[RMDB]
An RNA of 177 nucleotides, treated with 2A3 and DMS and read out base by base.
For 2A3, 2,239 sequencing reads were counted.
Conditions: 150 mM KOAc, 10 mM MgCl2 and 150 mM bicine (pH 8.5), 24 C.
RNA sequence: GGGAACGACUCGAGUAGAGUCGAAAACACAACCAGAGCCCCAAUAUAUGAGACAGAUAAAGGAGUAGUUUAUGGGCGUAAAUUGCUGAGUCUACGUAUAUAACAGGUACUUCUAAACCAUCAGUGAGCAAUUAGUAAUCUUCGGAUUACUAAUUGCAAAAGAAACAACAACAACAAC
Reactivity to 2A3 in 0.01 (KOAc 150mM, MgCl2 10mM, bicine 150mM(pH8.5), 24C), signal-to-noise 2, nucleotides 027 to 126: c020a010c030a050a000c050c020a040g020a070g110c000c000c020c030a050a000u060a010u020a030u110g030a040g020a050c020a010g120a050u130a090a190a040g090g020a040g030u050a010g010u050u020u110a050u030g040g050g000c030g000u010a020a010a040u110u100g020c010u050g040a000g020u000c020u050a060c030g040u040a060u010a010u010a150a030c050a030g000g080u030a050c020u050u050c030u090a100a050a080c010c010a060u050c010a040g050u010g110a070
Reactivity to DMS in 0.01 (KOAc 150mM, MgCl2 10mM, bicine 150mM(pH8.5), 24C), signal-to-noise 4, nucleotides 027 to 126: c070a090c100a060a100c020c060a100g030a120g000c050c010c020c050a130a070u000a060u010a030u000g010a090g030a040c060a100g010a100u010a070a130a060g000g000a040g010u010a020g010u010u010u010a050u010g010g020g000c030g000u010a010a040a050u000u010g010c040u000g000a110g000u000c010u010a070c020g010u010a030u010a070u000a070a070c150a070g020g030u000a020c040u010u000c030u000a040a090a110c090c050a080u000c090a040g000u000g000a250